[RMDB]
RNA sequence: GGGAACGACUCGAGUAGAGUCGAAAAAAGAGAAUUAAUAUUUUGGAAAAUGUGCUAAGGUAAAGAGUUAGAAGAUUAGUGAAGCGCAAUGAAUGAAAUGCAUUCUUUUAUGUGAAAAUACAAAAAGGAUCGACAAAGAUUUCGAUCUUUGUCGAUCAAAAGAAACAACAACAACAAC
Reactivity to DMS in 0.01 (KOAc 150mM, MgCl2 10mM, bicine 150mM(pH8.5), 24C), signal-to-noise 1, nucleotides 027 to 126: a020a010g020a030g010a100a010u010u010a040a200u000a010u000u000u000u000g000g010a250a080a130a030u000g020u000g020c010u070a010a150g000g040u000a010a140a070g000a190g060u010u020a040g020a060a060g000a170u000u000a050g020u000g010a140a100g020c080g050c000a010a070u000g020a110a100u180g000a000a010a040u000g010c100a040u000u000c040u000u000u010u050a090u020g000u010g000a030a060a030a240u050a090c110a020a060a000a070a060g000
Reactivity to 2A3 in 0.01 (KOAc 150mM, MgCl2 10mM, bicine 150mM(pH8.5), 24C), signal-to-noise 2, nucleotides 027 to 126: a000a000g090a020g060a040a000u090u060a140a050u080a060u010u100u070u020g000g040a000a130a000a080u070g000u070g000c010u040a070a130g100g060u130a060a030a000g070a010g040u060u250a080g010a220a000g010a050u140u120a010g160u110g090a060a000g000c000g030c050a000a030u100g030a160a000u060g000a000a060a000u100g030c040a000u020u030c000u040u110u000u020a060u000g000u050g100a060a110a000a000u150a050c050a010a070a000a000a000g090